[RMDB]
Source: RMDB library M2RFPK, as collected in RNAgym. The record gives the reactivity of an RNA of 207 nucleotides to 2A3 and DMS. For DMS, 2,173 sequencing reads were counted. The 2A3 profile rests on 3,197 reads. The reactions ran in a buffer of 150 mM KOAc, 10 mM MgCl2 and 150 mM bicine (pH 8.5), at 24 C. Values cover nucleotides 27 to 156.
RNA sequence: GGGAACGACUCGAGUAGAGUCGAAAACGUCCCCGUCGUACAGAAUGGUAACAUAUCUCUCAAAAUAUCUGAGCUUGGGUAUACGGGGAAACCCAACCCCUUGGGAAGAUUGGGUAUAUGGCUAAAUUACAUCGAUUGUACUUCGGUACAAUCGAAAGCAGCUAUAAUACUUCGGUAUUAUAGCUGCAAAAGAAACAACAACAACAAC
Reactivity to 2A3 in 0.01 (KOAc 150mM, MgCl2 10mM, bicine 150mM(pH8.5), 24C), signal-to-noise 4, nucleotides 027 to 156: c040g100u040c000c020c010c020g100u080c030g010u050a060c010a070g120a080a160u130g050g020u170a180a020c010a010u080a090u020c050u000c010u010c070a040a090a130a180u160a130u070c050u030g010a010g050c010u040u090g040g000g000u030a030u010a040c030g000g010g000g000a000a020a040c010c000c000a010a020c010c000c000c000u030u040g020g030g020a020a020g030a060u050u030g000g020g030u050a030u010a020u070g050g000c040u080a090a130a090u190u090a070c050a070u020c020g000a000u000u000g000u000a000c000u010u030c090g020g000u000a000c000a000a000u000c000g010a010a000a000
Reactivity to DMS in 0.01 (KOAc 150mM, MgCl2 10mM, bicine 150mM(pH8.5), 24C), signal-to-noise 2, nucleotides 027 to 156: c070g000u000c000c000c010c010g020u000c120g030u000a100c100a160g010a120a130u010g000g000u000a160a130c080a080u020a080u010c040u010c060u010c050a080a070a170a120u010a070u000c030u000g010a300g050c120u000u020g010g050g000u000a110u000a030c110g030g020g030g050a060a100a100c010c000c010a030a130c070c000c010c060u000u000g010g010g020a240a070g000a230u000u000g000g010g020u000a060u000a050u020g030g000c100u030a030a060a100u000u010a160c050a180u000c000g000a020u010u000g020u000a000c000u000u020c300g030g010u000a000c000a000a010u000c000g000a010a010a080